RNA sequence: GGGAACGACUCGAGUAGAGUCGAAAACCCUUCAGCGAACAGAAGAGACUCCCCUCGAUAGGAGCAAGACCAUAGCGAUGGGGGGAGAUGCUAGGAGUCGGAGGAGACCGAAGCGAGGAGGAAAGCAUAGCGCAUGGGUUCGCCCAUGCGAAAAGAAACAACAACAACAAC
Reactivity to 2A3 in 0.01 (KOAc 150mM, MgCl2 10mM, bicine 150mM(pH8.5), 24C), signal-to-noise 6, nucleotides 027 to 129: c000c000c000u020u100c020a030g000c010g030a040a010c010a090g040a070a010g030a040g040a050c010u010c010c010c000c000u000c010g090a110u090a140g060g020a080g000c010a030a010g090a030c040c020a100u130a040g050c030g060a090u180g000g000g000g000g020g000a000g000a010u030g000c010u030a030g060g010a020g040u080c020g000g000a020g010g000a010g010a010c000c000g010a040a000g010c030g020a000g000g010a000g000g010a020a010a000g060c050a080u130a070g070
Reactivity to DMS in 0.01 (KOAc 150mM, MgCl2 10mM, bicine 150mM(pH8.5), 24C), signal-to-noise 4, nucleotides 027 to 129: c000c000c000u040u030c030a070g030c000g020a000a000c080a090g020a140a040g030a090g030a210c040u030c020c010c020c010u000c000g030a160u030a120g020g050a080g050c130a000a080g030a110c050c000a030u050a120g030c000g020a030u030g060g000g000g020g080g010a010g020a040u000g030c100u010a040g000g000a110g030u060c090g040g000a060g000g030a150g040a040c020c000g010a140a050g020c000g000a040g000g000a050g000g000a040a040a090g000c060a080u030a070g020